[RMDB]
RNA sequence: GGGAACGACUCGAGUAGAGUCGAAAAGGUCUAAAAACCAUGGUUGUGUCUGCGGGUCAAGAGCAAACUAACUGUAAUACUAGUUCCUUAGCUUAUUACGAACCUGUGCAGGGUCGUAAAAUGCUGACAGUGUACACAUGUUCGCAUGUGUACACUGAAAAGAAACAACAACAACAAC
Reactivity to DMS in 0.01 (KOAc 150mM, MgCl2 10mM, bicine 150mM(pH8.5), 24C), signal-to-noise 3, nucleotides 027 to 126: g000g010u010c030u020a070a070a100a150a030c040c030a080u000g020g000u000u000g010u000g000u000c040u000g010c050g000g000g000u010c150a080a070g020a150g000c040a020a060a040c060u000a020a060c080u000g010u010a060a060u020a120c140u020a130g020u000u000c030c030u010u010a040g010c020u020u000a250u000u000a000c000g000a040a040c000c000u000g020u010g030c260a120g020g000g010u000c000g010u000a000a010a060a050u010g000c000u000g000a140
Conditions: 150 mM KOAc, 10 mM MgCl2 and 150 mM bicine (pH 8.5), 24 C. Structure probing data (DMS) for a 177-nucleotide construct. Values are in units of 0.01, from 0 to 300, in steps of 10. Reactivities are given for positions 27 through 126.